[RMDB]
RNA sequence: GGGAACGACUCGAGUAGAGUCGAAAAUCCACCUUGGAGUGCCCUAUUCGAGGCACUGCAGUCUCGAUAGAAAGGCUAAGAACGUCGCAAUGACGUAAGGUGGGACUUUUCCUUCUGGAACCUAGCGCCGUACUACCUACUUCGGUAGGUAGUACGGAAAAGAAACAACAACAACAAC
Reactivity to DMS in 0.01 (KOAc 150mM, MgCl2 10mM, bicine 150mM(pH8.5), 24C), signal-to-noise 1, nucleotides 027 to 126: u000c000c000a000c010c000u000u000g000g020a140g040u010g030c000c000c000u000a170u000u000c010g010a020g030g020c000a080c300u010g030c230a150g010u000c000u000c000g020a000u000a010g040a100a070a110g020g000c010u000a110a090g030a190a050c000g000u010c010g000c230a110a170u010g020a020c000g070u000a040a030g000g020u030g000g000g030a050c130u000u000u000u000c000c000u000u020c120u010g080g000a010a050c050c020u020a090g040c130g000
Reactivity to 2A3 in 0.01 (KOAc 150mM, MgCl2 10mM, bicine 150mM(pH8.5), 24C), signal-to-noise 1, nucleotides 027 to 126: u000c010c000a000c000c010u070u020g260g000a230g110u250g040c040c000c000u040a030u000u020c010g000a040g010g000c000a050c180u090g070c000a060g010u010c000u030c010g000a010u000a040g050a130a080a020g000g000c040u020a090a020g060a100a020c010g000u000c010g040c180a220a300u300g010a010c030g010u040a000a010g070g000u010g000g000g000a010c000u050u040u000u060c000c000u140u140c200u190g060g050a020a020c000c030u040a120g060c050g000